[RMDB]
Notes: The record gives the reactivity of an RNA of 177 nucleotides to DMS and 2A3. The 2A3 profile rests on 3,562 reads. DMS (dimethyl sulfate) methylates the pairing face of unpaired adenines and cytosines.
RNA sequence: GGGAACGACUCGAGUAGAGUCGAAAAACACGAUCAACAAAACCUUGCUUAUCCCGCAUUCCAUAAGGACGGGGGUUAUCCUUAAAUGAGGUAACGGCAGGCGCAGGUCCUGAAAUCGUGAGGUGGCCUAAGUCUCUAACUUCGGUUAGAGACUUAGAAAAGAAACAACAACAACAAC
Reactivity to DMS in 0.01 (KOAc 150mM, MgCl2 10mM, bicine 150mM(pH8.5), 24C), signal-to-noise 3, nucleotides 027 to 126: a090c010a020c020g020a010u010c070a100a150c180a030a010a040a020c010c000u000u010g090c050u010u010a120u000c020c010c000g000c150a180u010u010c010c020a130u010a110a100g020g010a060c020g010g010g000g020g000u000u000a010u000c000c000u000u000a050a080a080u000g010a050g010g000u000a010a020c020g010g000c010a000g000g010c100g000c020a020g000g000u010c010c000u000g000a040a040a010u000c010g000u000g010a090g020g020u010g000g000c120
Reactivity to 2A3 in 0.01 (KOAc 150mM, MgCl2 10mM, bicine 150mM(pH8.5), 24C), signal-to-noise 4, nucleotides 027 to 126: a010c000a000c020g030a030u050c010a000a040c000a020a030a020a020c010c020u120u240g020c020u260u150a060u170c010c010c000g070c050a220u110u050c030c010a060u080a300a110g020g000a020c010g030g000g010g000g020u020u000a020u100c010c020u280u100a220a260a300u300g020a060g020g020u000a020a000c020g110g030c000a020g010g000c030g000c020a000g000g010u140c000c010u000g010a030a030a000u030c010g010u010g020a040g060g130u130g040g040c000